[RMDB]
RNA sequence: GGGAACGACUCGAGUAGAGUCGAAAAGAUAUGGACCGAACCCUUCGAUAAGCUGUUGGGUCGGAAACGACCCACAGCUUUUGACGAAGUUGCGGUCCUAAGUCAAACUUGUCGCUUCGGCGACAAGGCGCUCUAUUGAGUUCGCUCAAUAGAGCGCAAAAGAAACAACAACAACAAC
Reactivity to DMS in 0.01 (KOAc 150mM, MgCl2 10mM, bicine 150mM(pH8.5), 24C), signal-to-noise 1, nucleotides 027 to 126: g000a020u020a300u000g000g000a030c000c000g000a040a090c270c300c050u010u000c000g010a210u000a010a050g060c000u000g020u000u000g040g020g040u000c010g020g020a080a060a170c000g000a000c000c020c000a050c000a000g020c000u000u000u000u000g020a170c230g010a020a120g020u000u010g000c020g020g000u000c000c000u000a010a140g020u000c040a130a160a300c000u000u020g010u010c000g040c000u000u030c190g030g020c000g000a000c000a000a000g030
The record gives the reactivity of an RNA of 177 nucleotides to DMS. Reactivities are given for positions 27 through 126. The reactions ran in a buffer of 150 mM KOAc, 10 mM MgCl2 and 150 mM bicine (pH 8.5), at 24 C. DMS adducts were read by reverse transcription with MarathonRT. The data come from the RNA Mapping Database (RMDB), library TTRDES. The DMS profile rests on 840 reads.